[RMDB]
RNA sequence: GGGAACGACUCGAGUAGAGUCGAAAAACUGAAAUCCACUACUAGCACCUCCUUCCUUCAUUCAGGUCACCUACAUGGCAACUGCACUAUCCGAUACAUGUUACAGCAUUCCAGUAAUGAGAGCUGAAGGAUACGCAUUGAAAACGAAUAAGUCCAAGCCAAGAAUGUAAUUCGUUACAUUCUUGGCAAAAGAAACAACAACAACAAC
Reactivity to 2A3 in 0.01 (KOAc 150mM, MgCl2 10mM, bicine 150mM(pH8.5), 24C), signal-to-noise 4, nucleotides 027 to 156: a020c100u080g020a040a030a020u040c020c030a030c030u110a010c000u020a010g020c020a050c010c040u050c000c000u030u030c030c000u040u050c030a080u080u060c020a020g020g020u050c040a000c040c000u050a060c030a090u110g060g000c030a060a040c040u030g050c040a030c090u040a050u070c020c010g030a030u040a130c060a060u150g040u170u100a030c020a010g010c000a020u080u000c020c020a020g060u120a170a100u160g040a110g010a020g120c020u020g020a050a020g010g010a010u030a000c020g000c030a010u090u120g080a010a080a020a000c080g060a070a040u160a150a000g030u130c090c110a030a090
Reactivity to DMS in 0.01 (KOAc 150mM, MgCl2 10mM, bicine 150mM(pH8.5), 24C), signal-to-noise 2, nucleotides 027 to 156: a100c060u000g010a050a110a100u010c030c020a070c010u000a120c030u010a120g000c040a040c020c010u000c030c010u000u000c030c030u000u020c090a130u000u000c030a110g030g000u000c040a070c020c020u000a100c060a070u010g010g010c050a130a050c040u000g000c010a060c060u000a090u010c030c010g000a170u010a060c100a080u010g010u000u000a130c020a030g010c020a190u000u010c020c000a030g040u000a100a090u000g000a080g010a110g020c030u000g010a060a060g000g010a090u000a090c060g040c030a100u000u010g000a100a070a070a100c070g010a120a060u000a040a120g000u000c020c010a060a300